[RMDB]
RNA sequence: GGGAACGACUCGAGUAGAGUCGAAAAAGACGGUGUUUCACCAUGUUGGCCUGGAUGGUCUCGAUCUCUUGCCCUCGUGAUCCGCCUGCCUCGGUCUCCCAAAAUGCUGGGAUUACAGGCGUGAGCCUCGACAUGAUCUGUUCGCAGAUCAUGUCGAAAAAGAAACAACAACAACAAC
Reactivity to 2A3 in 0.01 (KOAc 150mM, MgCl2 10mM, bicine 150mM(pH8.5), 24C), signal-to-noise 1, nucleotides 027 to 126: a030g080a050c070g010g020u050g010u070u050u170c040a060c000c030a020u110g070u090u090g100g010c000c000u050g090g030a050u060g040g020u030c000u010c020g050a110u010c050u000c000u100u100g050c030c000c000u000c030g070u080g010a030u000c000c040g000c020c010u010g000c000c000u000c040g000g000u040c040u060c000c020c010a050a090a050a010u260g010c080u040g000g010g030a010u080u050a050c010a050g010g010c000g000u090g010a000g000c000c050
Reactivity to DMS in 0.01 (KOAc 150mM, MgCl2 10mM, bicine 150mM(pH8.5), 24C), signal-to-noise 2, nucleotides 027 to 126: a060g030a050c090g010g030u010g010u010u000u000c030a060c030c060a080u000g020u010u000g020g000c020c010u000g010g010a050u000g030g020u010c030u010c040g010a060u010c040u000c030u000u010g000c050c020c020u010c100g020u000g000a070u010c040c040g000c030c020u000g020c080c020u010c040g010g010u000c150u000c010c010c030a050a060a090a120u000g010c090u010g000g000g000a020u000u030a090c030a030g000g000c000g010u010g010a080g020c040c040
Chemical mapping of a 177-nucleotide RNA with 2A3 and DMS. The 2A3 profile rests on 1,526 reads. Reactivities are given for positions 27 through 126. The DMS profile rests on 3,130 reads. The data come from the RNA Mapping Database (RMDB), library OK2TRN. For 2A3 the reverse transcriptase was SuperScript II with manganese. The RNA was probed in 150 mM KOAc, 10 mM MgCl2 and 150 mM bicine (pH 8.5) at 24 C.